[RMDB]
RNA sequence: GGGAACGACUCGAGUAGAGUCGAAAACAAGAAAAUGCAAGAGAGUGUCACCACACAAGGAAAGAAGCGCAUGAUACAAAAGCUCAAGUUCAGGGAUGCUUUUGACAGAAAAGUUGGGCGCGAGGUGACAACAGGUACUAUUCGUAGUACCUGUUGUAAAAGAAACAACAACAACAAC
Reactivity to DMS in 0.01 (KOAc 150mM, MgCl2 10mM, bicine 150mM(pH8.5), 24C), signal-to-noise 9, nucleotides 027 to 126: c070a120a090g010a070a040a080a070u020g000c070a080a070g010a080g000a100g010u000g000u010c020a040c030c030a250c090a080c150a090a110g000g010a080a070a090g010a090a130g000c020g010c020a060u020g000a080u020a090c030a000a000a010a010g010c020u000c050a060a070g010u020u030c210a070g000g010g000a040u040g010c000u000u000u000u000g000a110c110a080g010a060a050a060a100g010u000u010g000g000g010c000g000c020g010a050g000g010u010g010
Reactivity to 2A3 in 0.01 (KOAc 150mM, MgCl2 10mM, bicine 150mM(pH8.5), 24C), signal-to-noise 9, nucleotides 027 to 126: c020a020a020g190a100a130a020a010u250g050c090a130a020g060a010g010a020g080u030g020u020c000a010c040c010a070c010a020c040a070a060g150g040a160a060a070g070a060a040g010c010g000c030a040u080g040a040u120a130c020a010a020a000a010g010c010u020c050a060a110g060u240u160c080a080g100g100g060a040u150g000c000u020u020u000u010g050a060c030a020g170a050a090a020a020g080u110u070g030g020g000c000g000c010g010a040g000g030u040g020